[RMDB]
RNA sequence: GGGAACGACUCGAGUAGAGUCGAAAAUAAAAUAGCGUACUAGAGACGCUGAUCUCUAGAUAACUACGAACUCUAGAGAUACGGUCCAAUUGAAUACAACGACAGUUGGACCUAUUCGUAGAAAAAAACUAUACAAGACGUUCGCGUCUUGUAUAGUAAAAGAAACAACAACAACAAC
Reactivity to 2A3 in 0.01 (KOAc 150mM, MgCl2 10mM, bicine 150mM(pH8.5), 24C), signal-to-noise 3, nucleotides 027 to 126: u180a020a070a010a090u110a020g000c000g010u010a020c030u060a050g060a060g020a090c000g000c020u000g040a070u020c000u000c000u000a020g020a100u070a090a060c020u040a010c020g040a040a010c020u010c010u030a000g010a000g040a060u080a110c120g000g010u000c000c000a020a000u000u020g020a080a040u200a210c130a140a010c220g170a010c010a020g000u010u010g000g000a010c000c000u010a040u030u050c010g020u010a000g060a110a010a020a000a010a000
Reactivity to DMS in 0.01 (KOAc 150mM, MgCl2 10mM, bicine 150mM(pH8.5), 24C), signal-to-noise 2, nucleotides 027 to 126: u000a060a050a080a070u000a030g010c000g020u000a080c030u000a090g000a110g000a020c000g010c020u000g010a060u000c010u000c010u000a040g010a070u000a050a090c030u000a000c000g000a020a170c270u000c000u000a010g000a210g000a070u010a050c170g010g000u000c010c010a000a000u000u010g000a100a080u000a090c230a050a080c160g010a150c020a010g000u000u000g000g000a000c000c000u000a010u010u000c010g020u000a000g050a010a000a030a090a110a060